[RMDB]
RNA sequence: GGGAACGACUCGAGUAGAGUCGAAAAUUCGCCUCGGAGUUCGUGCCAGGAGUGCGUUUGCAAAGCACGCUACAAGUUUGCGUUAUUGCAAAGUUGACACUGUAAAUGCACUAUCUGGUACGACACCCCGGGGCGACAACCCUAGUUCGCUAGGGAAGUAAUACCCACGCUUCGGCGUGGGUAUUACAAAAGAAACAACAACAACAAC
Reactivity to 2A3 in 0.01 (KOAc 150mM, MgCl2 10mM, bicine 150mM(pH8.5), 24C), signal-to-noise 3, nucleotides 027 to 156: u020u000c000g000c000c000u000c000g010g000a010g000u030u000c000g000u010g000c010c000a000g000g010a000g000u000g010c020g000u000u000u000g040c050a140a110a080g100c080a120c170g000c010u110a110c040a080a180g050u010u020u000g030c040g070u150u220a120u130u290g000c020a000a020a050g080u030u030g050a050c030a000c090u010g000u000a000a000a000u020g010c000a000c020u040a300u110c000u010g000g000u000a000c000g000a000c000a020c000c000c000c000g000g000g010g000c000g000a010c000a000a030c000c000c000u020a000g000u030u060c140g010c080u000a000g020g010g010a000a010
This 207-nucleotide RNA was probed chemically with 2A3.